An RNA of 207 nucleotides, treated with 2A3 and read out base by base.
2A3 is a SHAPE reagent: it acylates the 2'-hydroxyl of flexible nucleotides of all four kinds.
Values cover nucleotides 27 to 156.
The reactions ran in a buffer of 150 mM KOAc, 10 mM MgCl2 and 150 mM bicine (pH 8.5), at 24 C.
RNA sequence: GGGAACGACUCGAGUAGAGUCGAAAAAGCGCGACAGGAAGUAAUUACAACCUUGAAACCCCUACUGCCACAACGGUUACAGGGAACAGUAAUGCGAUUGAAGAGAUUCCUAAAGACUUCAUAAGAAUCCGUUACGAUAAAGUAGACUCAAAGAUUCUCAGGCUAAAACAUUCGUGUUUUAGCCUGAAAAAGAAACAACAACAACAAC
Reactivity to 2A3 in 0.01 (KOAc 150mM, MgCl2 10mM, bicine 150mM(pH8.5), 24C), signal-to-noise 1, nucleotides 027 to 156: a000g000c010g000c000g000a010c010a030g050g000a060a040g000u170a040a000u190u160a040c000a040a020c000c030u020u030g070a080a050a030c020c010c000c000u050a070c110u020g010c040c030a020c040a210a090c120g000g000u000u090a030c050a070g020g000g020a050a050c020a070g000u030a010a000u120g030c150g080a090u050u050g050a050a010g070a030g010a040u070u040c050c000u110a180a120a080g030a090c030u100u120c070a010u070a260a060g010a090a050u000c020c120g040u100u100a000c000g010a040u160a210a140a000g050u030a000g040a030c000u070c210a150a110a020g020a100u240u230c010

The data come from the RNA Mapping Database (RMDB), library OK3TST.